[RMDB]
The data come from the RNA Mapping Database (RMDB), library M2RFPK. The record gives the reactivity of an RNA of 207 nucleotides to DMS and 2A3.
RNA sequence: GGGAACGACUCGAGUAGAGUCGAAAAAUGGCGAAUGCAUGGGGAACUACAUCUGUGUCGCGAGUUCGAUUCUCGCCAGGGCCUGGUCCUGUAGCUCAGUUGGUAGAGCAAGCAGUUCCCCGGACACAAAAUCCAGCUAGGUUCGCCUAGCUGGAAAGCAUAUGCCAGAGUUCGCUCUGGCAUAUGCAAAAGAAACAACAACAACAAC
Reactivity to DMS in 0.01 (KOAc 150mM, MgCl2 10mM, bicine 150mM(pH8.5), 24C), signal-to-noise 1, nucleotides 027 to 156: a150u000g040g000c050g000a070a080u000g000c210a070u010g000g040g070g000a050a040c030u010a060c000a080u000c110u010g080u000g000u010c010g030c030g030a090g030u000u030c030g000a300u000u000c030u000c010g000c020c000a110g000g000g030c110c090u010g110g000u010c010c030u010g000u010a080g050c030u000c000a210g000u000u000g010g050u000a050g040a010g030c010a130a300g000c080a040g000u000u010c000c000c120c000g020g000a080c040a050c040a020a080a050a150u000c000c000a040g000c000u000a010g030g040u000u000c230g080c010c000u030a000g000c000u000g000g000a010a010a150
Reactivity to 2A3 in 0.01 (KOAc 150mM, MgCl2 10mM, bicine 150mM(pH8.5), 24C), signal-to-noise 1, nucleotides 027 to 156: a000u140g080g000c020g060a110a030u140g040c060a050u090g020g000g020g020a010a000c020u090a040c090a130u060c020u030g060u020g030u150c010g010c010g000a020g000u000u040c010g000a000u000u020c010u000c010g000c000c010a010g000g000g000c050c160u210g100g060u030c000c000u000g000u000a010g000c000u010c000a010g000u120u080g080g140u130a010g000a010g000c000a010a000g010c030a000g010u000u020c000c000c040c020g020g000a000c000a000c000a000a160a010a070u000c000c000a000g000c000u000a010g020g030u030u020c060g060c070c000u010a000g000c000u000g000g000a000a000a000
The reactions ran in a buffer of 150 mM KOAc, 10 mM MgCl2 and 150 mM bicine (pH 8.5), at 24 C.
2A3 is a SHAPE reagent: it acylates the 2'-hydroxyl of flexible nucleotides of all four kinds.